[RMDB]
RNA sequence: GGGAACGACUCGAGUAGAGUCGAAAAGUGAAUGGACUCUCAGGGACCCCUUGGGAGUCGGGAACAAAUCCUCCUCCGGGCGCUCCCCUCGGUUGUCCCGCCGGAAGGUUCACACCCCCAGCCUCCGCUUCUUGCCUUCUUCGCUUGCGAUCCUCGUACUGCUAUUAUAGUUCGCUAUAAUAGCAGUAAAAGAAACAACAACAACAAC
Reactivity to 2A3 in 0.01 (KOAc 150mM, MgCl2 10mM, bicine 150mM(pH8.5), 24C), signal-to-noise 1, nucleotides 027 to 156: g040u060g020a080a070u100g050g000a010c020u000c000u010c090a060g110g050g100a300c100c080c000c040u020u040g060g000g040a030g010u050c060g000g010g010a180a070c080a080a130a040u040c020c060u020c020c010u060c040c000g080g040g040c070g030c140u020c020c020c020c000u020c040g000g000u040u070g020u020c000c000c000g000c000c040g070g030a010a000g080g000u150u110c020a050c020a060c050c010c000c010c000a010g010c010c010u010c000c030g000c010u110u000c050u070u140g000c000c020u010u000c020u030u010c080g000c060u040u010g000c030g010a080u030c010c010u000c010g000u000